[RMDB]
The record gives the reactivity of an RNA of 177 nucleotides to 2A3 and DMS.
The 2A3 profile rests on 9,106 reads.
Conditions: 150 mM KOAc, 10 mM MgCl2 and 150 mM bicine (pH 8.5), 24 C.
In probing experiments dimethyl sulfate is read out at A N1 and C N3, which are open when not base-paired.

RNA sequence: GGGAACGACUCGAGUAGAGUCGAAAAAUGAGUUCAACCGCGCGCCGCUCUGCCUCUCUCCAACUGAGGUCGCGGUGCACGACCAGCACUUCGGCAAUCUGCGUGCCAACGCGGCGUACCGGAUUGAAAUCACUGCAUAGUUCGCUAUGCAGUGAUUAAAAGAAACAACAACAACAAC
Reactivity to 2A3 in 0.01 (KOAc 150mM, MgCl2 10mM, bicine 150mM(pH8.5), 24C), signal-to-noise 7, nucleotides 027 to 126: a010u170g010a060g080u060u070c050a030a040c040c000g020c000g000c000g000c010c010g000c000u040c080u120g010c040c000u010c000u000c010u030c070c040a150a180c160u120g010a000g000g040u040c030g010c030g020g020u020g000c010a000c000g030a050c020c050a010g040c030a020c040u070u090c070g040g000c030a030a100u050c040u080g040c040g050u040g030c010c030a070a050c080g010c020g020g010c020g010u030a050c040c010g010g080a170u020u070g030a020
Reactivity to DMS in 0.01 (KOAc 150mM, MgCl2 10mM, bicine 150mM(pH8.5), 24C), signal-to-noise 5, nucleotides 027 to 126: a050u020g000a130g010u000u000c040a040a090c020c030g010c160g000c010g000c010c010g000c000u030c150u030g000c020c010u000c020u000c090u020c150c170a100a160c140u000g000a050g010g000u000c250g000c080g010g020u010g010c050a020c100g010a120c140c080a070g000c060a020c060u000u010c060g000g000c050a140a080u000c050u000g010c070g000u010g010c060c090a100a080c120g000c020g000g000c020g030u020a090c160c000g000g000a100u010u000g000a050